[RMDB]
RNA sequence: GGGAACGACUCGAGUAGAGUCGAAAACGCUGGGUGUGACACGAUCACCAGUGGCUCGCGAUAAGCCUACUGAAGCGCGCACGGUAGGCUUUUGACGCGAGCCACCAGUGAUCGGUCACACCUGUGCUGAAGCGCGCACGGCAACCGAAAGGUGCGACCUUGAUACUCACUUCGGUGAGUAUCAAGGAAAAGAAACAACAACAACAAC
Reactivity to 2A3 in 0.01 (KOAc 150mM, MgCl2 10mM, bicine 150mM(pH8.5), 24C), signal-to-noise 1, nucleotides 027 to 156: c020g010c000u010g000g000g020u010g000u030g020a050c110a060c300g010a000u030c020a000c060c010a040g000u000g000g010c000u010c000g000c030g040a040u030a180a000g030c000c010u010a000c000u020g060a180a100g030c010g020c010g010c020a020c050g010g000u000a000g000g000c010u000u040u010u020g060a070c060g000c000g000a000g000c000c000a000c000c000a010g000u030g010a000u050c000g000g000u000c000a000c000a000c000c000u000g000u000g000c000u030g020a120a050g010c030g000c000g000c080a010c000g010g000c020a060a040c030c010g080a110a050a010g070g000u020g000c000g100a060

The data come from the RNA Mapping Database (RMDB), library RNAMAK. Structure probing data (2A3) for a 207-nucleotide construct. 2A3 adducts were read by reverse transcription with SuperScript II with manganese. The 2A3 profile rests on 1,548 reads.